[RMDB]
RNA sequence: GGGAACGACUCGAGUAGAGUCGAAAACACACGUGCUUCGGCACGUGUGAAACCUAGUCUAAAUAACGCAAGACUAGGAAAGCGUAAGUACGAAAGUACAAAAAAGGUGAGUGUUCGCACUCACCAAGUGAUCCCUAAACUUCGGUUUAGGGAUCACAAAAGAAACAACAACAACAAC
Reactivity to DMS in 0.01 (KOAc 150mM, MgCl2 10mM, bicine 150mM(pH8.5), 24C), signal-to-noise 1, nucleotides 027 to 126: c000a030c020a000c020g000u000g000c000u000u000c140g050g000c020a010c000g000u000g020u010g000a000a110a040c000c000u020a000g000u000c000u000a230a050a020u050a140a070c260g000c200a050a010g000a000c000u000a000g020g000a030a050a170g010c150g000u000a110a110g010u000a000c030g020a110a070a110g000u000a000c020a000a040a110a020a100a040g000g020u010g000a000g010u000g020u000u000c260g000c000a000c000u000c020a000c020c020a010a020
Reactivity to 2A3 in 0.01 (KOAc 150mM, MgCl2 10mM, bicine 150mM(pH8.5), 24C), signal-to-noise 1, nucleotides 027 to 126: c000a010c000a000c000g000u010g000c030u000u090c080g160g010c000a000c000g010u000g000u000g000a040a000a000c000c000u000a000g000u000c010u100a240a110a160u190a190a100c100g050c140a090a020g000a010c000u010a000g010g000a050a000a010g000c030g160u090a080a190g000u000a010c010g010a130a000a000g000u000a010c000a000a130a020a010a020a010g000g000u010g000a010g000u010g030u050u120c180g020c040a010c000u000c020a010c020c040a010a000

The record gives the reactivity of an RNA of 177 nucleotides to DMS and 2A3. Conditions: 150 mM KOAc, 10 mM MgCl2 and 150 mM bicine (pH 8.5), 24 C. 2A3 adducts were read by reverse transcription with SuperScript II with manganese. For DMS the reverse transcriptase was MarathonRT. The 2A3 profile rests on 1,650 reads.